An RNA of 177 nucleotides, treated with 2A3 and DMS and read out base by base. For DMS, 10,260 sequencing reads were counted. It was measured as part of the RMDB library OK1LIB. The RNA was probed in 150 mM KOAc, 10 mM MgCl2 and 150 mM bicine (pH 8.5) at 24 C. For 2A3, 10,749 sequencing reads were counted.
RNA sequence: GGGAACGACUCGAGUAGAGUCGAAAAUAUCUUUAUUUAGCCAUAAAUGAAUCUUUUUAUCGUUAUCAUGAUUUAACAAUUUAAGUGCAAGAUGUGCAGCAGUAAUGCCACUACCAACGAUAUGAUCUGAAUAUACAGUGUUCGCACUGUAUAUUCAAAAAGAAACAACAACAACAAC
Reactivity to 2A3 in 0.01 (KOAc 150mM, MgCl2 10mM, bicine 150mM(pH8.5), 24C), signal-to-noise 9, nucleotides 027 to 126: u140a010u020c030u060u220u030a110u060u080u080a050g050c020c000a090u090a110a100a070u150g060a060a050u080c050u040u130u020u060u080a070u070c040g040u020u040a070u120c080a070u130g150a130u070u060u170a070a050c060a060a090u070u100u190a200a050g030u040g080c030a040a050g030a140u100g030u050g040c060a060g000c000a000g060u180a080a080u030g010c010c000a030c010u050a060c020c040a030a010c030g030a030u030a050u180g070a040u020c040
Reactivity to DMS in 0.01 (KOAc 150mM, MgCl2 10mM, bicine 150mM(pH8.5), 24C), signal-to-noise 5, nucleotides 027 to 126: u010a040u020c070u020u010u010a040u010u030u010a110g000c070c060a090u040a050a020a090u020g010a060a110u020c000u000u000u010u000u020a020u020c060g010u010u010a030u000c050a080u030g000a070u010u020u030a030a050c220a060a100u030u010u020a060a050g000u010g000c090a070a060g000a060u010g020u010g020c080a080g000c020a020g000u030a090a090u000g030c020c010a030c020u020a070c090c110a030a030c050g000a020u010a030u030g000a080u030c130